[RMDB]
RNA sequence: GGGAACGACUCGAGUAGAGUCGAAAAUCAGCUGCAGAACUGGUAAGAUUCUCCAAAGCAGAAAACUGGCAGCUGACUGGCUAACCACAUAAACACAUAAAUGUACCUUUGAGCUGUGUUAGUUGAAGAGCUAUUCAAGAUUCGUCUUGAAUAGCUCAAAAGAAACAACAACAACAAC
Reactivity to DMS in 0.01 (KOAc 150mM, MgCl2 10mM, bicine 150mM(pH8.5), 24C), signal-to-noise 3, nucleotides 027 to 126: u000c000a040g000c010u010g030c000a070g000a050a270c010u010g000g000u020a090a190g010a170u010u040c140u030c050c070a000a070a120g010c000a010g010a020a040a050a070c020u000g030g000c020a010g000c000u000g000a040c160u000g010g030c070u020a070a040c010c020a080c070a090u060a040a040a060c110a050c030a140u040a070a090a020u000g000u000a100c050c010u010u040u010g000a080g000c080u000g000u000g000u010u000a050g000u000u000g000a050a110
Reactivity to 2A3 in 0.01 (KOAc 150mM, MgCl2 10mM, bicine 150mM(pH8.5), 24C), signal-to-noise 7, nucleotides 027 to 126: u030c000a010g000c000u010g000c000a000g000a150a130c020u040g060g010u130a160a040g060a250u180u030c070u010c080c060a150a130a060g040c020a020g040a020a090a010a040c010u040g090g000c000a000g000c000u000g020a010c030u020g030g000c010u030a050a050c080c000a040c010a070u220a040a190a000c050a010c010a070u180a120a170a050u180g040u160a130c000c020u080u120u120g060a030g040c080u020g020u020g060u110u060a100g010u020u030g060a110a080

Structure probing data (DMS and 2A3) for a 177-nucleotide construct.
For DMS, 3,401 sequencing reads were counted.
For 2A3 the reverse transcriptase was SuperScript II with manganese.
The RNA was probed in 150 mM KOAc, 10 mM MgCl2 and 150 mM bicine (pH 8.5) at 24 C.